[RMDB]
RNA sequence: GGGAACGACUCGAGUAGAGUCGAAAAGAUAUGGACCGAACUACACGAAAGGUGAUGACCUUGCUCGGAAACGAGCAAGCAAGUACUCGUGCGGUCCUAAGUCAAAAUCAGCAGUUCGCUGCUGAAAUCUGAUGUAGCUGUUCGCAGCUACAUCAGAAAAAGAAACAACAACAACAAC
Reactivity to DMS in 0.01 (KOAc 150mM, MgCl2 10mM, bicine 150mM(pH8.5), 24C), signal-to-noise 2, nucleotides 027 to 126: g010a030u000a300u000g040g010a010c010c000g010a150a110c130u000a300c000a000c000g010a050a170a100g010g000u000g020a040u000g020a270c300c010u010u010g010c010u000c000g000g010a050a070a080c000g050a010g060c000a000a000g000c040a030a190g000u000a020c070u000c020g040u010g010c000g010g000u000c000c010u000a010a120g000u000c030a130a060a100a060u000c010a010g000c000a000g030u000u000c170g120c000u010g000c000u080g000a010a070a020
Reactivity to 2A3 in 0.01 (KOAc 150mM, MgCl2 10mM, bicine 150mM(pH8.5), 24C), signal-to-noise 2, nucleotides 027 to 126: g000a020u040a000u090g000g000a030c000c000g000a160a130c120u260a040c270a020c030g140a220a160a090g300g110u290g190a220u210g010a020c020c030u020u000g030c000u010c000g000g040a040a020a000c010g050a000g000c000a000a000g020c010a020a040g050u070a110c090u010c110g010u010g000c010g000g000u000c000c000u000a020a000g040u010c000a020a010a080a210u030c010a000g000c010a010g020u050u200c250g050c110u000g000c010u020g000a060a010a010
Source: RMDB library TTRDEL, as collected in RNAgym. Chemical mapping of a 177-nucleotide RNA with DMS and 2A3. The 2A3 profile rests on 2,033 reads. For DMS, 894 sequencing reads were counted. The reactions ran in a buffer of 150 mM KOAc, 10 mM MgCl2 and 150 mM bicine (pH 8.5), at 24 C.